[RMDB]
RNA sequence: GGGAACGACUCGAGUAGAGUCGAAAACUGUAACGCUCUGGUUUUAAUGUGGAGUGUGCUGCAGCUACUGUCAUGGCUCAUCUCCUGCCAUUAAGCUGCUACCACUUAUUUUCUCCGGCAGUGGUAGGUGGAAGUGCACCUUCGGGUGCACUUCCACAAAAGAAACAACAACAACAAC
Reactivity to 2A3 in 0.01 (KOAc 150mM, MgCl2 10mM, bicine 150mM(pH8.5), 24C), signal-to-noise 1, nucleotides 027 to 126: c000u020g050u070a040a000c000g010c000u000c000u000g010g000u050u000u240u190a120a130u100g110u220g000g000a030g000u030g020u150g020c110u000g000c010a010g000c040u040a020c050u200g240u200c020a020u120g000g020c000u000c020a100u010c100u120c070c010u020g000c020c020a010u060u000a000a020g040c020u070g040c020u050a110c000c000a070c000u010u130a070u000u080u010u000c030u000c000c050g060g060c010a000g020u000g000g080u030a070g030
Source: RMDB library OK1LIB, as collected in RNAgym. The record gives the reactivity of an RNA of 177 nucleotides to 2A3. Conditions: 150 mM KOAc, 10 mM MgCl2 and 150 mM bicine (pH 8.5), 24 C. The 2A3 profile rests on 466 reads.